[RMDB]
RNA sequence: GGGAACGACUCGAGUAGAGUCGAAAAAUCACCGGUGGGGAACCCCAUACGGCAACGGCGUAGAAGUAAAUGCUAGCCAAUCCGUGGUAUCUACGCGACGGAGCAUCCACGGAUAACUCUAACAAGGCUAAGCGUCUCGGUUUCGACCGAGACGCAACCAUUAGGCUCGAUUCGUCGAGCCUAAUGGAAAAGAAACAACAACAACAAC
Reactivity to 2A3 in 0.01 (KOAc 150mM, MgCl2 10mM, bicine 150mM(pH8.5), 24C), signal-to-noise 2, nucleotides 027 to 156: a000u020c000a000c000c010g000g040u020g000g020g020g130a190a200c090c010c000c040a030u200a220c010g020g020c050a090a020c070g000g020c020g000u000a000g020a070a060g020u120a020a020a020u100g120c110u070a010g000c000c000a020a000u030c000c010g000u000g000g020u030a030u030c020u020a000c010g010c000g080a080c120g060g020a020g000c000a010u000c000c000a000c010g000g000a010u010a000a060c090u100c020u140a060a100c060a200a000g000g000c000u030a000a060g040c000g010u030c000u000c000g040g000u050u090u060c200g050a050c000c010g000a000g050a000c000g010c000a000a000